[RMDB]
Record summary
Source: RMDB library M2RFPK, as collected in RNAgym. Structure probing data (2A3) for a 207-nucleotide construct. 2A3 adducts were read by reverse transcription with SuperScript II with manganese.

RNA sequence: GGGAACGACUCGAGUAGAGUCGAAAACAUAGCGUUUCACAAUGUGAGCCAUUAACAUUGUUUAUGCAAGCACGUUUCGCAAUGUACGGCGCAGAAACAUUGCCAACACAAAUACGCUUCACGAUGUAAAACAUCGGUGCGUUCGCGCACCGAUGAAGACAUUUACGGACUUCGGUCCGUAAAUGUCAAAAGAAACAACAACAACAAC
Reactivity to 2A3 in 0.01 (KOAc 150mM, MgCl2 10mM, bicine 150mM(pH8.5), 24C), signal-to-noise 2, nucleotides 027 to 156: c050a040u140a010g040c000g040u070u080u060c040a000c000a000a000u020g030u070g020a050g050c090c080a110u170u160a020a020c000a020u040u050g040u030u070u100a120u140g010c030a000a060g060c080a050c070g000u000u040u060c020g050c030a020a020u050g030u000a010c000g000g060c080g010c070a000g080a030a100a000c010a000u010u000g020c020c030a170a020c070a010c070a060a130a000u240a080c040g030c000u040u080c080a020c100g100a100u110g080u300a000a030a130a020c010a000u000c000g000g000u000g000c040g030u040u050c190g000c000g000c040a000c040c000g000a000u000g000a000a000